The record gives the reactivity of an RNA of 177 nucleotides to 2A3 and DMS. 2A3 adducts were read by reverse transcription with SuperScript II with manganese. For DMS the reverse transcriptase was MarathonRT.
RNA sequence: GGGAACGACUCGAGUAGAGUCGAAAAGAUAUGGAGGCAGGGUGGGAGACGGUGGUCGGAAACGACCAUUCGUCGAAGAACACCUGCCUCCUAAGUCAAAACACCCUUUCUGUUCGCAGAAAGGGUGCGUAGUCUUAAUCUUCGGAUUAAGACUACGAAAAGAAACAACAACAACAAC
Reactivity to 2A3 in 0.01 (KOAc 150mM, MgCl2 10mM, bicine 150mM(pH8.5), 24C), signal-to-noise 4, nucleotides 027 to 126: g000a000u010a000u030g000g000a000g000g000c010a030g100g170g270u210g070g050g040a300g000a010c000g020g000u010g000g010u010c000g000g010a030a010a000c000g000a000c010c020a040u300u300c020g000u000c000g010a110a030g070a020a000c010a010c000c000u000g000c010c000u000c000c000u000a000a000g000u000c000a000a000a020a040c010a000c000c000c000u000u000u020c010u010g060u050u100c300g010c110a000g000a000a000a010g000g000g010u000g000
Reactivity to DMS in 0.01 (KOAc 150mM, MgCl2 10mM, bicine 150mM(pH8.5), 24C), signal-to-noise 5, nucleotides 027 to 126: g010a010u010a020u010g000g000a010g010g010c010a010g010g020g030u020g040g020g010a060g010a000c010g000g030u000g000g020u000c000g030g000a010a000a030c000g020a010c000c010a000u000u010c020g040u000c000g030a090a130g010a120a300c000a040c000c000u010g010c000c000u000c000c000u000a000a040g000u010c010a110a080a150a300c000a010c000c000c000u000u000u000c000u000g000u000u020c250g010c010a000g000a010a010a010g000g000g010u000g000